[RMDB]
RNA sequence: GGGAACGACUCGAGUAGAGUCGAAAAGCUGGUUGCUGUGUGUAUAUAGACACCAGUGCUGGCAGCUACCUGAAUAGUCGGUAAUGGGAACUGACUAUCACUGACUACCAUUUUCACUGGCACUGCAACAUGUGAGUGUUUUCGAACACUCACAUGUAAAAGAAACAACAACAACAAC
Reactivity to DMS in 0.01 (KOAc 150mM, MgCl2 10mM, bicine 150mM(pH8.5), 24C), signal-to-noise 5, nucleotides 027 to 126: g000c020u000g000g030u010u010g040c000u000g000u010g020u000g010u000a120u010a160u010a140g020a060c040a050c070c050a000g020u000g000c140u000g010g010c020a040g010c080u000a070c090c050u000g000a090a120u000a010g010u000c000g020g010u000a080a100u010g010g020g010a140a120c130u010g010a070c010u000a020u000c060a040c070u000g010a060c030u000a060c050c040a090u010u010u000u000c090a070c070u000g020g000c030a050c070u010g010c190a150
Reactivity to 2A3 in 0.01 (KOAc 150mM, MgCl2 10mM, bicine 150mM(pH8.5), 24C), signal-to-noise 6, nucleotides 027 to 126: g030c020u030g050g030u220u220g010c010u010g060u010g010u000g040u140a020u040a040u090a300g250a040c020a010c010c010a000g010u010g000c010u020g020g000c010a010g030c020u070a070c000c000u020g050a090a050u030a040g010u000c030g040g000u060a100a130u150g060g040g050a060a090c040u040g030a030c010u020a010u020c020a010c030u020g060a050c020u050a060c040c020a080u110u050u050u110c070a050c040u030g010g000c030a000c080u090g020c030a050